Structure probing data (DMS and 2A3) for a 177-nucleotide construct. The DMS profile rests on 1,261 reads. Reactivities are given for positions 27 through 126. For 2A3, 3,518 sequencing reads were counted. The data come from the RNA Mapping Database (RMDB), library TTRDEL.
RNA sequence: GGGAACGACUCGAGUAGAGUCGAAAAGAUAUGGAAGCUAUAAUCACCGAGGUCAACAGCUCGGAAACGAGACAUGACCAAGGUGGUAGCUUCCUAAGUCAAAGACAAUGACUUCGGUCAUUGUCAAGCAUUAGCUCAACUUCGGUUGAGCUAAUGCAAAAGAAACAACAACAACAAC
Reactivity to DMS in 0.01 (KOAc 150mM, MgCl2 10mM, bicine 150mM(pH8.5), 24C), signal-to-noise 2, nucleotides 027 to 126: g020a120u010a300u010g010g000a040a000g030c010u000a110u000a300a080u010c010a010c000c020g010a300g000g000u000c010a030a160c280a140g000c020u000c010g010g000a080a070a120c000g020a010g020a040c140a210u020g040a020c000c000a010a300g020g000u000g000g010u000a010g010c000u000u000c000c000u000a000a040g000u010c020a100a180a160g040a010c000a000a000u010g000a000c000u000u010c210g010g010u000c000a030u010u010g000u000c010a000a060
Reactivity to 2A3 in 0.01 (KOAc 150mM, MgCl2 10mM, bicine 150mM(pH8.5), 24C), signal-to-noise 2, nucleotides 027 to 126: g020a020u080a010u180g000g000a020a000g000c010u050a030u100a260a300u220c000a010c010c000g010a020g000g030u020c030a040a070c030a270g040c000u000c010g030g000a090a000a020c010g000a000g010a020c060a160u110g000a000c000c000a010a030g030g000u010g010g000u000a000g000c010u000u000c000c000u000a060a020g030u000c060a100a020a060g000a000c020a000a000u020g010a000c000u030u100c300g160g000u000c000a000u000u050g010u010c000a020a010